[RMDB]
RNA sequence: GGGAACGACUCGAGUAGAGUCGAAAAGAUAUGGAAAGUGGUACGUUGAUCUGUGUGGACAUGAAAGCACUCGGAAACGAGUGCAAUUUCAACAGCCACCAGAUCAACGUACCACUUUCCUAAGUCACCAAUAAAGAGUCUUCGGACUCUUUAUUGGAAAAGAAACAACAACAACAAC
Reactivity to DMS in 0.01 (KOAc 150mM, MgCl2 10mM, bicine 150mM(pH8.5), 24C), signal-to-noise 2, nucleotides 027 to 126: g010a060u000a300u020g010g000a020a010a020g030u000g010g020u010a010c000g020u000u020g000a010u000c000u010g000u030g070u000g000g000a060c110a290u000g000a050a030a110g010c000a010c000u010c000g000g000a120a080a220c010g010a030g010u000g020c000a000a010u020u000u000c010a040a090c290a200g000c010c000a000c000c000a010g000a010u000c000a010a000c000g010u000a000c000c010a000c010u000u000u000c000c000u000a000a080g000u000c050a290